Chemical mapping of a 177-nucleotide RNA with 2A3. Values cover nucleotides 27 to 126. 2A3 adducts were read by reverse transcription with SuperScript II with manganese. The data come from the RNA Mapping Database (RMDB), library OK1LIB. Reactivities are rounded to 0.1 and cut off at 0 and 3.
[RMDB]
RNA sequence: GGGAACGACUCGAGUAGAGUCGAAAAGGACUUUAAGUAUGCAUCUAAAUAAUGGCUUUUGUUAUUGGCUUCAUAGCUACCUAUGAUUGUAAGGGGCUUAUUGAUGCUGAUGGCGGUCCCAUUACAAAGGCACCAUAGGGUUCGCCCUAUGGUGCCUAAAAGAAACAACAACAACAAC
Reactivity to 2A3 in 0.01 (KOAc 150mM, MgCl2 10mM, bicine 150mM(pH8.5), 24C), signal-to-noise 2, nucleotides 027 to 126: g040g000a220c030u180u200u000a230a030g000u040a030u300g020c180a100u090c080u220a130a300a300u090a000a000u020g000g000c000u000u000u010u070g000u170u000a050u000u000g000g000c010u000u010c080a030u010a040g000c000u250a300c000c000u090a090u200g120a180u050u300g090u090a020a000g000g000g000g000c000u130u040a090u180u050g000a000u000g000c010u000g160a000u000g000g000c000g000g130u000c000c000c000a080u000u060a010c030a000a130